[RMDB]
RNA sequence: GGGAACGACUCGAGUAGAGUCGAAAAGUACACCCUCCCUCCCUCCCAAAAGCGCGCAAAUAAAGGGAGGGACUCAGGGAUGAGUAGGCCAAAAGGCCAAAUCCCGAAGACGCGCGACGGGACAAAACGUUCAGAAGUUAUUCGUAACUUCUGAACGAAAAGAAACAACAACAACAAC
Reactivity to 2A3 in 0.01 (KOAc 150mM, MgCl2 10mM, bicine 150mM(pH8.5), 24C), signal-to-noise 2, nucleotides 027 to 126: g030u040a040c040a130c090c000c020u020c000c010c010u000c010c010c010u020c020c000c010a050a100a040a030g010c010g000c000g020c050a020a080a090u210a090a130a030g000g000g000a000g000g000g000a000c010u030c030a020g010g000g000a000u040g020a020g120u300a140g010g000c000c000a120a300a090a210g000g000c000c010a010a100a070u020c000c000c010g000a040a010g090a010c020g000c010g000c010g050a030c010g000g040g000a010c060a030a080a020a020
Reactivity to DMS in 0.01 (KOAc 150mM, MgCl2 10mM, bicine 150mM(pH8.5), 24C), signal-to-noise 2, nucleotides 027 to 126: g010u000a130c190a090c000c000c010u000c000c000c000u020c010c010c020u000c030c020c000a070a100a050a120g000c000g010c000g030c070a060a060a070u000a040a090a150g030g000g030a000g010g000g000a010c050u000c070a070g010g020g000a080u010g000a050g000u010a080g000g010c000c010a040a070a130a120g020g020c000c030a030a090a070u000c000c000c010g020a090a090g010a080c030g000c000g000c020g000a130c130g000g000g010a070c180a000a080a080a110
The data come from the RNA Mapping Database (RMDB), library M2PK90. Chemical mapping of a 177-nucleotide RNA with 2A3 and DMS. For DMS the reverse transcriptase was MarathonRT. For 2A3 the reverse transcriptase was SuperScript II with manganese. The reactions ran in a buffer of 150 mM KOAc, 10 mM MgCl2 and 150 mM bicine (pH 8.5), at 24 C. For DMS, 1,327 sequencing reads were counted.